[RMDB]
RNA sequence: GGGAACGACUCGAGUAGAGUCGAAAAGGCCAAGGAGAGCGCAAGUCGUGUAGGCGACUGGGUUACCGCUACGCUUGGUGAGACAGCACCCGGAGGCAGACCUAAUCACGCUUGGCGUCACACCUUAGCUAAAAUGAGUCUUCGGACUCAUUUUAGCAAAAGAAACAACAACAACAAC
Reactivity to DMS in 0.01 (KOAc 150mM, MgCl2 10mM, bicine 150mM(pH8.5), 24C), signal-to-noise 3, nucleotides 027 to 126: g010g020c000c000a020a040g000g010a160g000a200g010c020g020c020a060a030g000u000c020g000u010g020u000a090g010g020c010g020a050c020u000g000g020g000u000u000a110c190c070g010c050u000a080c100g010c110u000u000g020g000u010g000a120g010a070c140a080g010c100a090c050c030c020g000g000a090g000g040c100a060g000a110c020c000u000a090a070u010c050a040c080g030c030u000u000g010g010c000g010u000c080a110c080a120c030c000u000u000a140
Reactivity to 2A3 in 0.01 (KOAc 150mM, MgCl2 10mM, bicine 150mM(pH8.5), 24C), signal-to-noise 1, nucleotides 027 to 126: g000g000c000c000a020a010g110g070a090g050a050g030c020g030c050a000a080g030u190c000g000u060g050u110a010g050g130c000g030a010c010u000g000g040g000u030u080a120c070c010g000c060u060a030c070g070c160u020u170g050g030u030g050a030g000a030c050a010g040c030a020c000c030c010g000g000a040g110g000c070a020g010a130c000c000u040a090a030u160c010a000c030g050c000u040u100g120g000c000g070u050c030a020c000a010c110c000u020u040a000

About this RNA: The record gives the reactivity of an RNA of 177 nucleotides to DMS and 2A3. Reactivities are given for positions 27 through 126. The reactions ran in a buffer of 150 mM KOAc, 10 mM MgCl2 and 150 mM bicine (pH 8.5), at 24 C. For DMS, 2,605 sequencing reads were counted.